[RMDB]
Source: RMDB library OK2TRN, as collected in RNAgym. This 177-nucleotide RNA was probed chemically with DMS and 2A3. Values cover nucleotides 27 to 126. The RNA was probed in 150 mM KOAc, 10 mM MgCl2 and 150 mM bicine (pH 8.5) at 24 C. For DMS, 7,394 sequencing reads were counted. For DMS the reverse transcriptase was MarathonRT.
RNA sequence: GGGAACGACUCGAGUAGAGUCGAAAACAAACCGUGUGACCUGCACUGUACCACCGUGGACGGCCAGCGGCAGCUCAUGGUCCCCGCCCGCGACGGCACAUCCUGCAAGCUCACUGACCUGCGAGGGCUUCUUUAGAUGGUUCGCCAUCUAAAGAAGAAAAGAAACAACAACAACAAC
Reactivity to DMS in 0.01 (KOAc 150mM, MgCl2 10mM, bicine 150mM(pH8.5), 24C), signal-to-noise 5, nucleotides 027 to 126: c130a110a110a110c060c040g010u010g010u010g000a100c100c020u000g000c030a070c080u010g000u000a090c050c040a070c080c090g000u010g000g000a070c060g010g000c230c020a050g000c090g000g000c060a060g010c040u000c050a040u010g010g010u000c030c050c010c050g000c030c010c020g010c060g000a070c060g000g000c030a050c070a050u010c040c040u010g020c080a070a070g000c060u010c040a070c050u000g000a150c040c020u000g010c120g010a080g000g000g000
Reactivity to 2A3 in 0.01 (KOAc 150mM, MgCl2 10mM, bicine 150mM(pH8.5), 24C), signal-to-noise 3, nucleotides 027 to 126: c030a010a100a020c030c020g030u030g020u030g110a160c040c010u020g010c020a010c050u030g020u120a100c010c020a030c020c040g060u080g090g050a080c030g030g030c030c020a030g040c100g070g020c030a020g010c020u030c080a080u100g040g010u070c030c000c010c010g020c000c010c000g040c010g040a070c010g020g000c030a010c000a070u040c010c010u050g010c020a040a030g030c010u030c030a040c050u050g070a060c000c010u010g030c040g050a080g020g020g000